[RMDB]
RNA sequence: GGGAACGACUCGAGUAGAGUCGAAAAACCGCCUCGGACAGCACGAAGAAGAUGCCUGUGCCGACGGUGGCACCUACCCCGAACAGCGUGAGUUGGAACGUGCCGAUACUGCGUUUCAGUUGAUCGGAUCAGCAAAAUCAUUCGUGAUUUUGCUGAUAAAAGAAACAACAACAACAAC
Reactivity to DMS in 0.01 (KOAc 150mM, MgCl2 10mM, bicine 150mM(pH8.5), 24C), signal-to-noise 3, nucleotides 027 to 126: a130c000c000g000c010c010u010c020g020g010a110c010a010g000c010a020c030g020a130a110g010a180a130g000a090u000g010c130c050u000g010u020g000c000c010g000a020c180g010g010u000g000g010c060a040c050c030u000a150c020c020c010c010g030a090a090c140a040g010c050g040u010g020a070g030u050u020g010g000a070a030c030g030u000g010c030c000g020a080u030a050c060u000g010c230g010u000u000u020c020a040g010u040u020g010a070u000c020g000g000
Reactivity to 2A3 in 0.01 (KOAc 150mM, MgCl2 10mM, bicine 150mM(pH8.5), 24C), signal-to-noise 4, nucleotides 027 to 126: a000c000c010g000c000c000u000c000g010g000a010c000a000g000c010a000c080g180a110a260g090a130a000g110a250u030g050c050c020u070g070u210g280c000c000g000a000c100g000g000u000g000g000c020a090c010c020u100a170c020c000c000c000g080a140a060c020a060g100c020g020u070g030a150g050u050u040g020g010a070a010c020g040u030g070c050c000g040a050u120a200c040u050g000c010g050u000u050u110c010a020g030u040u030g040a040u020c020g000g010